Chemical mapping of a 177-nucleotide RNA with DMS and 2A3. For DMS the reverse transcriptase was MarathonRT. The DMS profile rests on 20,861 reads. The RNA was probed in 150 mM KOAc, 10 mM MgCl2 and 150 mM bicine (pH 8.5) at 24 C.
RNA sequence: GGGAACGACUCGAGUAGAGUCGAAAACUAUUUAUAGACAGAACAGUGGAUUAGGUAUUUCGAUAUAAAACUUUAACAAUGAUACUUGCAGUGGUAUCUAUCAAGAUAGGCAGGCAAUCAACGAAAGGAGAUGUUUAUUAUUCGUAAUAAGCAUCUCAAAAGAAACAACAACAACAAC
Reactivity to DMS in 0.01 (KOAc 150mM, MgCl2 10mM, bicine 150mM(pH8.5), 24C), signal-to-noise 8, nucleotides 027 to 126: c010u010a050u010u020u030a070u010a080g000a110c070a040g010a070a080c080a060g010u010g000g000a080u010u020a050g010g010u010a070u010u010u010c040g010a100u010a060u020a050a060a070a130c090u010u020u020a050a080c130a050a150u010g000a030u000a090c020u000u020g010c070a090g010u020g000g020u000a010u000c000u010a080u050c210a080a040g000a040u000a020g000g020c010a030g000g010c050a050a030u020c050a020a040c140g000a050a060a070g000
Reactivity to 2A3 in 0.01 (KOAc 150mM, MgCl2 10mM, bicine 150mM(pH8.5), 24C), signal-to-noise 7, nucleotides 027 to 126: c000u030a080u050u150u070a170u050a050g120a070c040a010g070a100a050c020a040g060u070g090g050a100u100u100a080g080g010u060a150u050u120u070c050g020a010u020a000u040a090a090a040a020c040u120u120u150a100a050c060a060a090u120g020a020u020a030c010u040u070g040c020a080g040u090g130g010u020a010u000c000u010a120u110c050a020a050g020a060u030a030g060g000c020a000g030g000c020a020a060u050c020a010a070c030g090a100a010a010g110